[RMDB]
RNA sequence: GGGAACGACUCGAGUAGAGUCGAAAAUCCUAAGUCAGAGAGGUACUCCAAACCAUACUACCCACCGCUAUCGGAAACGAUAGCGAGGUAUGGGUAGAGUACUACCCACCUCUGAUAUGGAAAAACAUCACUCAUAGAUUCGUCUAUGAGUGAUGAACAACUUUAGACAGUUCGCUGUCUAAAGUUGAAAAGAAACAACAACAACAAC
Reactivity to 2A3 in 0.01 (KOAc 150mM, MgCl2 10mM, bicine 150mM(pH8.5), 24C), signal-to-noise 6, nucleotides 027 to 156: u040c010c000u030a100a040g020u000c000a000g010a000g000a010g010g010u010a000c010u010c020c040a270a200a160c010c000a020u010a020c020u070a060c020c070c070a060c040c000g000c000u000a000u010c000g040g080a140a040a030c000g000a000u000a010g000c010g000a010g010g000u010a010u010g000g000g000u020a020g000a000g000u000a010c010u020a030c040c050c020a080c010c000u010c000u000g010a010u010a090u080g060g030a080a110a010a030a000c000a000u000c000a000c000u000c000a000u000a000g030a020u050u060c240g070u000c140u000a000u000g000a000g000u000g000a000u000g000a000a000
Reactivity to DMS in 0.01 (KOAc 150mM, MgCl2 10mM, bicine 150mM(pH8.5), 24C), signal-to-noise 3, nucleotides 027 to 156: u000c000c000u010a040a200g030u000c010a010g020a030g000a120g030g000u000a020c010u010c010c020a060a120a180c040c010a010u000a010c010u010a000c020c010c020a300c130c000g000c000u000a000u000c010g020g000a220a090a290c030g020a000u000a000g020c000g010a000g010g020u000a010u010g000g010g020u000a030g000a030g000u000a020c010u000a070c020c000c030a300c140c000u000c000u000g000a010u000a230u000g000g000a050a090a090a150a140c000a010u000c000a010c000u010c000a020u000a000g030a080u000u000c300g010u000c000u000a000u000g000a020g010u000g010a000u000g010a070a190